[RMDB]
RNA sequence: GGGAACGACUCGAGUAGAGUCGAAAAUCAACCUCCUUCCUAUUCUUACUACUUUAUAAUACCUUCCCUUGUGUUGUCCAAGUAGAGCACGCUUUAAUAUCUUUCGUUUGGAGUGGGCACAAAUGGAACCGAGUAUUACUUUCGAGUAAUACUCGGUAAAAGAAACAACAACAACAAC
Reactivity to DMS in 0.01 (KOAc 150mM, MgCl2 10mM, bicine 150mM(pH8.5), 24C), signal-to-noise 3, nucleotides 027 to 126: u020c110a120a170c050c020u000c020c010u000u010c010c010u000a080u000u010c030u000u000a130c060u010a060c040u010u000u010a060u000a110a110u000a090c020c060u000u000c010c000c010u000u010g020u000g010u000u000g020u010c050c050a030a050g010u010a070g000a060g010c020a050c060g010c040u000u000u000a050a090u010a080u010c100u000u020u000c110g020u010u010u000g020g010a080g020u010g010g010g000c040a070c050a020a080a100u010g000g000a170
Reactivity to 2A3 in 0.01 (KOAc 150mM, MgCl2 10mM, bicine 150mM(pH8.5), 24C), signal-to-noise 1, nucleotides 027 to 126: u110c020a010a070c020c010u070c020c010u030u040c010c010u040a080u040u080c040u060u030a110c030u020a010c000u110u150u110a130u100a270a170u080a090c000c010u010u020c030c000c000u000u010g050u000g000u030u060g020u000c030c030a060a020g000u030a040g070a010g010c040a010c080g050c050u000u110u000a130a070u100a130u060c070u010u150u100c070g100u030u010u070g020g000a050g000u020g050g000g000c040a000c030a060a120a070u070g020g000a010